[RMDB]
RNA sequence: GGGAACGACUCGAGUAGAGUCGAAAAUGCUCGUCGGGUCACUCGGCGUUCAACGAGACUCAGUGACUGGCGUUGUCCGUAGCGUGCUUCUGCGCGACGGCGGCGUGAGACUCAAAUCAGACAGCUAAGCAUGUAGAUCUACCUGAGGAUGGCUUGCGUGUCAUAAUUCCUUCGGGAAUUAUGACACAAAAGAAACAACAACAACAAC
Reactivity to 2A3 in 0.01 (KOAc 150mM, MgCl2 10mM, bicine 150mM(pH8.5), 24C), signal-to-noise 2, nucleotides 027 to 156: u070g000c000u000c030g030u020c040g030g040g010u010c030a040c040u010c090g030g000c070g010u070u150c090a060a030c110g080a030g100a120c070u030c070a050g010u020g010a010c010u030g110g000c030g020u000u030g080u100c040c000g010u020a000g020c020g000u020g040c130u250u160c200u240g000c000g000c010g000a000c010g000g000c000g040g010c030g010u080g020a030g030a000c030u030c030a020a080a110u070c050a060g040a120c000a010g090c090u080a020a020g000c080a000u080g050u050a010g020a100u020c020u010a050c010c010u090g020a030g130g000a110u090g070g010c000u010u050g000c030

Chemical mapping of a 207-nucleotide RNA with 2A3. For 2A3 the reverse transcriptase was SuperScript II with manganese. Source: RMDB library RSTRND, as collected in RNAgym. Values cover nucleotides 27 to 156.